Chemical mapping of a 177-nucleotide RNA with 2A3 and DMS. The 2A3 profile rests on 10,005 reads. Conditions: 150 mM KOAc, 10 mM MgCl2 and 150 mM bicine (pH 8.5), 24 C.
RNA sequence: GGGAACGACUCGAGUAGAGUCGAAAACUGACUCAGACAGCGAUUCUGACUCAGACAGUGACUCAGAUUCCGAUAGCGAUUCCGACUCAGACAGUGACUCAGAUUCCGAUAGCGAUUCCGACUCAGACGUUACUUACCAGUUCGCUGGUAAGUAACGAAAAGAAACAACAACAACAAC
Reactivity to 2A3 in 0.01 (KOAc 150mM, MgCl2 10mM, bicine 150mM(pH8.5), 24C), signal-to-noise 9, nucleotides 027 to 126: c000u020g040a010c010u000c000a020g010a090c040a060g080c070g140a110u150u000c010u030g010a020c000u000c020a010g030a170c040a060g130u040g120a040c020u010c030a040g010a190u120u040c040c020g060a070u080a030g050c030g080a080u060u010c030c010g030a030c020u010c060a010g020a120c020a020g050u040g100a060c010u010c040a030g010a160u110u010c020c020g120a100u060a020g030c030g040a060u040u040c010c020g040a050c030u000c050a010g010a120
Reactivity to DMS in 0.01 (KOAc 150mM, MgCl2 10mM, bicine 150mM(pH8.5), 24C), signal-to-noise 4, nucleotides 027 to 126: c000u000g010a030c090u000c020a010g010a030c140a230g000c160g000a100u040u020c010u000g000a020c160u000c030a040g010a080c110a050g000u040g000a090c050u010c030a090g000a120u000u030c010c030g000a070u020a080g000c050g000a070u010u010c010c010g010a040c060u030c090a060g030a040c060a100g010u030g000a060c020u000c060a040g000a110u000u000c010c030g020a110u010a060g020c070g000a100u010u010c020c010g000a060c050u010c020a050g000a210
2A3 adducts were read by reverse transcription with SuperScript II with manganese.